[RMDB]
RNA sequence: GGGAACGACUCGAGUAGAGUCGAAAAGCGAAAUUCGUUUCGCGCAGUUGGGGUCAGAACGUGGGACAUGCACGUAACUGAAGCCUCCACGGUUACCAGUGCAACAGCCGUAACAUCGUUCUGACGGAGGCACCCGCUAACCGGACUUCGGUCCGAAGUGGGUUAUGAAGUUCGCUUCAUAACCCACAAAAGAAACAACAACAACAAC
Reactivity to 2A3 in 0.01 (KOAc 150mM, MgCl2 10mM, bicine 150mM(pH8.5), 24C), signal-to-noise 2, nucleotides 027 to 156: g000c000g000a000a010a000u240u190c190g080u000u000u000c020g050c000g060c060a030g010u250u270g170g010g010g000u020c010a000g000a000a000c010g000u030g100g050g130a110c140a130u100g000c000a000c000g020u000a000a000c000u000g060a110a060g020c020c000u000c000c010a040c000g000g000u010u000a010c060c140a140g000u010g030c040a120a130c030a240g210c090c150g100u160a140a000c000a060u190c050g010u020u000c020u020g000a000c010g000g000a020g000g020c000a090c000c000c000g000c110u150a120a020c070c000g020g000a010c010u030u070c300g090g010u000c000c010g000a120a040